Structure probing data (DMS and 2A3) for a 177-nucleotide construct. Conditions: 150 mM KOAc, 10 mM MgCl2 and 150 mM bicine (pH 8.5), 24 C. DMS adducts were read by reverse transcription with MarathonRT. The DMS profile rests on 2,415 reads.
RNA sequence: GGGAACGACUCGAGUAGAGUCGAAAAGCCGGCCGCCCAGGGAAACCGGGAGGCUCCGGGCUCUGGGGGGAGUAUGGCCGCAAGGCUGAAACUUGAAGGCAUUGACGGAGGGGUACCACCAGACGUGGUUCACUAAGGCAUUCGUGCCUUAGUGAACAAAAGAAACAACAACAACAAC
Reactivity to DMS in 0.01 (KOAc 150mM, MgCl2 10mM, bicine 150mM(pH8.5), 24C), signal-to-noise 2, nucleotides 027 to 126: g030c040c020g000g000c000c010g060c040c000c000a020g000g000g000a010a100a070c000c000g000g020g000a300g010g010c070u020c000c010g020g010g000c000u000c000u000g000g030g010g020g000g000a060g000u010a070u020g020g070c020c020g000c120a070a040g000g000c020u000g010a120a200a150c090u020u000g000a180a130g020g000c030a070u020u000g000a100c100g030g000a120g010g000g000g000u010a020c020c050a070c010c120a120g000a070c060g000u020g000
Reactivity to 2A3 in 0.01 (KOAc 150mM, MgCl2 10mM, bicine 150mM(pH8.5), 24C), signal-to-noise 3, nucleotides 027 to 126: g010c000c000g000g000c000c020g040c020c000c000a020g030g000g020a100a160a160c010c000g000g040g000a080g230g060c010u060c010c000g000g020g010c000u000c000u030g000g000g000g000g000g000a010g020u050a060u170g040g010c000c000g030c040a020a030g010g000c030u070g070a100a060a030c030u040u090g050a110a010g020g000c000a030u000u070g030a010c020g000g030a010g020g010g000g000u050a040c000c020a010c020c040a060g010a080c030g080u080g020